[RMDB]
RNA sequence: GGGAACGACUCGAGUAGAGUCGAAAACGCUGGGAUAACACGACCCUACAUCGAUCUACUGAAGCGCGCACGGUAGGGAGUAGCGAAGUUAUCCUGUGCUGAAGCGCGCACGGCAACCGAAAGGUGCGAAAUCCUUUGUGGUUCGCCACAAAGGAAACUUAACUUCUGCCUUCGGGCAGAAGUUAAGAAAAGAAACAACAACAACAAC
Reactivity to 2A3 in 0.01 (KOAc 150mM, MgCl2 10mM, bicine 150mM(pH8.5), 24C), signal-to-noise 1, nucleotides 027 to 156: c010g020c010u030g010g000g000a000u000a030a000c030a030c110g150a130c070c020c010u010a000c010a190u300c040g010a010u000c000u030a020c010u040g080a200a030g000c020g010c000g010c000a000c010g010g000u010a000g000g010g010a020g010u010a010g000c150g130a180a000g000u010u000a000u000c000c000u020g040u000g000c020u020g020a170a050g000c010g000c000g000c030a010c000g010g040c010a020a060c030c000g050a100a030a030g010g060u000g040c010g010a040a010a170u040c000c010u000u000u000g010u000g000g040u030u100c240g090c040c010a000c000a010a000a000g020g000a040a000a020